Conditions: 150 mM KOAc, 10 mM MgCl2 and 150 mM bicine (pH 8.5), 24 C. Structure probing data (2A3 and DMS) for a 177-nucleotide construct. Values cover nucleotides 27 to 126. The DMS profile rests on 2,021 reads. The data come from the RNA Mapping Database (RMDB), library OK2TRN. For DMS the reverse transcriptase was MarathonRT. For 2A3 the reverse transcriptase was SuperScript II with manganese.
[RMDB]
RNA sequence: GGGAACGACUCGAGUAGAGUCGAAAACAGCGGCCACAACAUGAACCCUGUCUUCAUAUACGUGGUGCCGAAGCCCUGCCCCCGCGCGCGUAUCGUGCUCCCAGGUUUGUGCGCUCGGCCGGUACGCCCUCGUAUUUAGCUUCGGCUAAAUACGAGGAAAAGAAACAACAACAACAAC
Reactivity to 2A3 in 0.01 (KOAc 150mM, MgCl2 10mM, bicine 150mM(pH8.5), 24C), signal-to-noise 1, nucleotides 027 to 126: c020a030g020c020g000g010c030c010a050c030a050a040c030a060u020g030a060a010c080c050c140u120g040u110c040u070u030c000a040u080a010u020a200c170g000u040g080g010u070g030c020c050g040a070a050g020c020c000c010u050g010c050c020c000c060c000g020c010g010c000g000c000g000u030a020u050c020g060u100g000c020u080c040c010c020a010g060g010u100u210u120g090u090g000c000g030c040u030c030g010g000c010c010g010g010u030a000c000g040c020
Reactivity to DMS in 0.01 (KOAc 150mM, MgCl2 10mM, bicine 150mM(pH8.5), 24C), signal-to-noise 2, nucleotides 027 to 126: c080a080g000c060g020g010c020c030a050c010a070a210c180a050u000g010a040a070c090c090c110u000g000u000c130u000u000c020a020u000a090u020a060c170g030u000g000g000u000g010c010c010g000a140a130g000c020c060c020u000g010c040c000c000c010c050g020c110g010c140g010c020g010u010a010u000c030g020u010g020c040u000c020c020c040a130g000g000u000u010u000g030u010g030c000g010c040u010c110g000g010c010c000g010g010u000a020c020g000c040

For 2A3, 1,363 sequencing reads were counted.